RNA sequence: GGGAACGACUCGAGUAGAGUCGAAAAACAGAACCAUCCAGCCAAUGAAGGUUUGUAAUUAAACUUACAGUUUGUUCAUGUGCAAGUAUCUUUACAAAGCUGCCUUCAUCACUGAAUAUACUGCACCUCAUUCCUAGGGAUUCGUCCCUAGGAAUGAAAAAGAAACAACAACAACAAC
Reactivity to DMS in 0.01 (KOAc 150mM, MgCl2 10mM, bicine 150mM(pH8.5), 24C), signal-to-noise 4, nucleotides 027 to 126: a100c060a040g000a060a130c250c050a030u000c020c010a020g010c060c120a110a040u010g000a030a030g000g030u000u000u010g000u000a010a020u000u010a030a070a040c040u000u010a050c010a030g010u000u000u010g010u000u010c210a070u010g020u000g020c060a020a020g020u000a020u000c050u000u000u000a030c070a030a050a200g010c230u000g010c000c000u000u010c010a000u000c220a070c060u000g000a020a020u000a040u000a210c040u000g000c060a110c070c070
Reactivity to 2A3 in 0.01 (KOAc 150mM, MgCl2 10mM, bicine 150mM(pH8.5), 24C), signal-to-noise 4, nucleotides 027 to 126: a000c010a000g030a030a010c010c010a010u020c010c000a010g060c020c040a050a020u040g010a040a000g020g000u050u070u090g020u040a000a020u040u100a040a080a010c010u000u050a040c020a110g100u070u170u120g180u170u200c100a130u180g020u040g120c030a020a010g000u020a060u040c040u010u030u000a010c020a010a100a040g030c120u070g030c070c000u000u010c000a020u040c020a000c020u030g040a010a000u090a020u040a050c020u030g030c020a090c010c000

An RNA of 177 nucleotides, treated with DMS and 2A3 and read out base by base. Source: RMDB library OK2TRN, as collected in RNAgym. For DMS the reverse transcriptase was MarathonRT. As a SHAPE reagent, 2A3 marks flexible, mostly unpaired nucleotides at the ribose 2'-OH.